[RMDB]
RNA sequence: GGGAACGACUCGAGUAGAGUCGAAAAGAUAUGGAUUCCACUAACUUCGAUAAGCUGGUAUCGGAAACGAUAUGCAGCUUUUGACGAAGGUGUGGAAUCCUAAGUCAAACCGUUCUUCGGAACGGAACACUACAGCGCUGUUCGCAGCGCUGUAGUGAAAAGAAACAACAACAACAAC
Reactivity to 2A3 in 0.01 (KOAc 150mM, MgCl2 10mM, bicine 150mM(pH8.5), 24C), signal-to-noise 1, nucleotides 027 to 126: g010a020u040a070u130g000g000a000u010u030c020c000a010c020u140a300a300c000u080u050c030g060a070u040a120a000g000c010u000g000g030u020a000u020c020g080g010a100a070a060c000g000a000u030a040u210g300c020a010g000c000u010u000u010u010g000a010c000g000a000a000g040g020u050g000u000g000g000a030a000u000c020c000u000a030a020g020u000c060a050a080a080c000c020g050u010u000c000u030u080c300g140g000a010a010c000g020g020a010a040
Reactivity to DMS in 0.01 (KOAc 150mM, MgCl2 10mM, bicine 150mM(pH8.5), 24C), signal-to-noise 2, nucleotides 027 to 126: g000a030u010a300u000g000g030a030u000u000c010c000a010c010u000a140a120c000u010u000c000g040a210u000a020a020g030c010u000g000g010u000a000u000c000g000g000a110a090a230c010g000a000u010a000u000g020c020a020g030c000u000u020u000u000g010a280c190g000a010a000g000g020u000g010u010g000g000a000a010u000c000c010u000a000a090g000u000c040a120a150a130c020c000g010u010u010c020u000u020c240g030g000a000a000c000g000g030a080a150

This 177-nucleotide RNA was probed chemically with 2A3 and DMS.
DMS adducts were read by reverse transcription with MarathonRT.
For DMS, 1,617 sequencing reads were counted.
Source: RMDB library TTRDES, as collected in RNAgym.